[RMDB]
RNA sequence: GGGAACGACUCGAGUAGAGUCGAAAAUAGUCGUAUAGCUCAUAAGCUCCGCAUCUAUACGACGUGCACUUCAUGCGGUGCUUAUGAGGAAGUGCACACGGUGGAGAUGCGAAAGCAUUUCCACCGAGCACGUACUUGGCUUCGGCCAAGUACGUGCAAAAGAAACAACAACAACAAC
Reactivity to 2A3 in 0.01 (KOAc 150mM, MgCl2 10mM, bicine 150mM(pH8.5), 24C), signal-to-noise 1, nucleotides 027 to 126: u020a040g120u070c050g000u010a010u020a140g000c000u000c000a040u000a000a070g020c010u000c000c000g000c030a040u090c070u210a120u050a160c140g170a170c030g030u020g000c030a010c030u000u040c000a050u010g000c000g000g000u000g000c010u060u000a040u040g000a000g000g000a010a000g030u030g000c000a000c030a010c080g000g000u000g000g040a000g000a000u000g000c000g030a040a030a060g030c000a000u000u000u000c050c000a000c000c010g000a000

The record gives the reactivity of an RNA of 177 nucleotides to 2A3.
The reactions ran in a buffer of 150 mM KOAc, 10 mM MgCl2 and 150 mM bicine (pH 8.5), at 24 C.
It was measured as part of the RMDB library OK1LIB.